[RMDB]
RNA sequence: GGGAACGACUCGAGUAGAGUCGAAAAACUCCACCCGAUCCUGGAGGGCGACGAGCCUGUCGAUAGCCUCAUCCAGACGGGAGUCGAUGCAUUGCUUCUCCGGAUGCCUCUCGUACCACGCGAGCGAAGCCCCUAUGACGUUCGCGUCAUAGGGGCUAAAAGAAACAACAACAACAAC
Reactivity to DMS in 0.01 (KOAc 150mM, MgCl2 10mM, bicine 150mM(pH8.5), 24C), signal-to-noise 2, nucleotides 027 to 126: a030c050u000c040c030a210c030c010c000g010a080u020c100c030u000g010g010a010g030g030g010c000g010a100c110g000a160g010c160c120u000g020u000c000g010a120u010a250g000c030c010u000c100a170u000c060c050a030g010a100c040g000g000g000a090g000u000c070g000a160u000g000c040a130u020u000g020c110u000u000c030u000c030c030g000g000a060u010g000c030c020u000c020u000c010g000u000a070c090c120a060c110g000c000g000a080g000c090g020a100
Reactivity to 2A3 in 0.01 (KOAc 150mM, MgCl2 10mM, bicine 150mM(pH8.5), 24C), signal-to-noise 1, nucleotides 027 to 126: a000c060u000c020c020a070c000c000c030g050a130u090c000c040u010g010g000a040g080g060g010c030g020a030c020g000a030g120c120c110u130g130u000c010g020a050u070a110g010c030c010u040c080a130u000c020c000a000g040a050c010g030g030g000a010g060u000c030g040a040u150g060c020a050u000u110g010c040u100u070c010u080c070c010g090g000a040u020g030c010c000u000c000u000c050g000u000a040c000c050a050c100g050c000g150a010g010c010g050a050